[RMDB]
RNA sequence: GGGAACGACUCGAGUAGAGUCGAAAACGAACUCAAAGAGAUGUAGACUGAUCACCGCCGAACUCCCUUCUGGAGAUGUAGGCCGCUCACUUUGAGCUGACGAACUCCCUUCUGGAGAUGUAGUCACGCCAUAAGCUGUCUUCGGACAGCUUAUGGCAAAAGAAACAACAACAACAAC
Reactivity to 2A3 in 0.01 (KOAc 150mM, MgCl2 10mM, bicine 150mM(pH8.5), 24C), signal-to-noise 2, nucleotides 027 to 126: c020g030a020a010c000u000c000a000a040a020g080a000g000a010u140g040u160a090g120a120c090u100g120a080u090c030a020c090c090g000c000c000g080a090a060c030u000c040c030c000u180u110c200u220g010g000a020g000a010u060g000u050a010g020g000c000c010g040c000u070c000a030c030u010u010u030g000a010g010c040u050g040a020c010g010a030a000c000u070c010c000c000u190u050c140u160g000g030a020g010a060u030g000u050a010g010u010c020a010c090
Reactivity to DMS in 0.01 (KOAc 150mM, MgCl2 10mM, bicine 150mM(pH8.5), 24C), signal-to-noise 2, nucleotides 027 to 126: c080g020a120a250c030u000c040a020a090a010g000a070g000a010u010g080u000a080g010a040c070u010g000a190u000c070a050c040c080g000c040c020g000a080a040c130u000c030c110c140u000u020c150u000g050g010a010g000a000u000g020u000a240g000g020c000c020g000c020u000c030a120c120u030u000u000g010a010g040c080u000g000a010c020g000a130a090c080u010c000c000c190u000u000c180u000g030g010a010g020a060u010g010u000a070g000u010c020a050c280

This 177-nucleotide RNA was probed chemically with 2A3 and DMS. The DMS profile rests on 865 reads. For 2A3, 1,128 sequencing reads were counted. The RNA was probed in 150 mM KOAc, 10 mM MgCl2 and 150 mM bicine (pH 8.5) at 24 C.